The record gives the reactivity of an RNA of 177 nucleotides to 2A3 and DMS. 2A3 adducts were read by reverse transcription with SuperScript II with manganese. The 2A3 profile rests on 2,166 reads. In probing experiments dimethyl sulfate is read out at A N1 and C N3, which are open when not base-paired. Reactivities are given for positions 27 through 126.
RNA sequence: GGGAACGACUCGAGUAGAGUCGAAAACAGGCGUAAUACCACAACCCUUAAGUUAGCGCUUAUGGGCUAGAAGCCCCGGAGAUACCCCUGCUUCGUCAGGCAGUCUGUACCGCGUACAGCCUGAAACCAGAUGAUUACGCUUCGGCGUAAUCAUCUGAAAAGAAACAACAACAACAAC
Reactivity to 2A3 in 0.01 (KOAc 150mM, MgCl2 10mM, bicine 150mM(pH8.5), 24C), signal-to-noise 4, nucleotides 027 to 126: c020a010g030g000c010g060u110a100a050u060a180c030c030a070c050a060a090c020c010c000u020u030a070a010g040u020u090a030g050c010g000c100u030u040a040u090g030g000g000c030u050a060g070a150a010g090c020c000c000c000g070g020a050g000a040u180a110c000c010c000c030u020g010c000u060u070c070g170u150c020a020g030g030c000a010g030u000c010u020g040u020a030c040c090g080c030g030u010a020c000a000g020c000c000u010g000a040a000a010c050
Reactivity to DMS in 0.01 (KOAc 150mM, MgCl2 10mM, bicine 150mM(pH8.5), 24C), signal-to-noise 2, nucleotides 027 to 126: c090a030g000g010c040g000u030a100a140u000a160c000c020a040c060a140a220c020c020c000u030u020a000a050g000u000u030a170g040c180g000c000u000u000a060u010g000g030g060c070u020a120g000a200a180g040c020c010c010c070g000g000a130g010a080u000a090c030c000c040c000u000g000c020u020u050c090g050u010c050a060g000g000c000a110g000u000c040u020g000u000a040c120c120g060c200g000u000a020c050a060g010c000c000u000g000a070a080a140c150